[RMDB]
RNA sequence: GGGAACGACUCGAGUAGAGUCGAAAAGAUGCCAACGAAUUAGACCACACCAACACAAGUCUUUAUUCAUUCCAUGCAAAUAAAGCCAUGUACCAUACGUGGAAUAACACGUAUUGUUAUGUGAACGUACAUGGCCUCGAUUCGUCGAGGCCAUGUAAAAAGAAACAACAACAACAAC
Reactivity to DMS in 0.01 (KOAc 150mM, MgCl2 10mM, bicine 150mM(pH8.5), 24C), signal-to-noise 2, nucleotides 027 to 126: g000a080u000g010c000c050a090a060c130g010a130a110u000u000a100g000a150c070c030a000c080a140c100c050a070a070c120a080c060a050a050g030u000c000u000u000u000a060u000u000c110a110u000u000c030c030a060u000g010c130a060a040a040u010a020a050a030g000c050c000a040u010g000u000a020c030c020a060u010a010c000g010u000g000g000a120a130u000a080a140c020a020c020g010u000a010u000u000g020u000u000a020u000g030u010g010a070a070c150g000
Reactivity to 2A3 in 0.01 (KOAc 150mM, MgCl2 10mM, bicine 150mM(pH8.5), 24C), signal-to-noise 1, nucleotides 027 to 126: g050a010u080g060c010c010a010a010c030g020a060a070u110u040a080g000a070c040c000a000c040a050c070c000a060a080c060a000c030a120a060g040u000c000u060u070u040a080u030u020c060a060u160u000c060c020a060u130g050c040a030a000a140u190a150a040a030g050c020c030a000u050g030u000a020c000c010a010u000a010c010g000u000g030g130a100a140u180a240a020c000a000c000g010u030a000u040u170g030u040u010a030u060g020u030g060a090a030c040g020
Structure probing data (DMS and 2A3) for a 177-nucleotide construct. 2A3 adducts were read by reverse transcription with SuperScript II with manganese. Reactivities are given for positions 27 through 126. The RNA was probed in 150 mM KOAc, 10 mM MgCl2 and 150 mM bicine (pH 8.5) at 24 C. For DMS, 1,002 sequencing reads were counted. DMS adducts were read by reverse transcription with MarathonRT.